RNA sequence: GGGAACGACUCGAGUAGAGUCGAAAAGAUAUGGAGUGUACUCCCCACCCUGUAGUCGCAUCCUCGGAAACGAGGAUGACCCGACCGGAGGUACACUCCUAAGUCAAAACCAGCCUUCGGGCUGGAAGAUUUGUUUUUUCUUCGGAAAAAACAAAUCAAAAGAAACAACAACAACAAC
Reactivity to 2A3 in 0.01 (KOAc 150mM, MgCl2 10mM, bicine 150mM(pH8.5), 24C), signal-to-noise 2, nucleotides 027 to 126: g040a020u030a000u060g000g000a000g000u010g000u030a010c070u170c050c070c000c020a170c070c040c150u250g190u300a110g010u050c010g000c040a020u000c010c000u020c010g000g000a010a000a000c020g000a000g040g000a000u010g020a010c010c040c020g030a050c090c180g000g030a020g030g050u000a010c000a000c000u000c000c000u010a020a000g010u010c000a000a010a130a230c000c000a000g000c000c000u060u120c300g100g040g000c030u000g020g000a010a010
Reactivity to DMS in 0.01 (KOAc 150mM, MgCl2 10mM, bicine 150mM(pH8.5), 24C), signal-to-noise 2, nucleotides 027 to 126: g000a020u020a030u030g000g000a010g030u000g020u000a010c010u000c020c020c170c300a300c210c140c090u000g000u000a100g010u000c050g000c000a000u000c000c000u000c000g000g000a010a010a040c000g010a020g000g000a000u000g020a060c230c270c080g000a020c040c160g000g030a050g020g010u010a010c000a000c010u000c000c000u000a000a080g020u000c000a120a070a070a170c000c000a000g000c000c000u000u000c230g030g000g010c000u000g010g000a030a060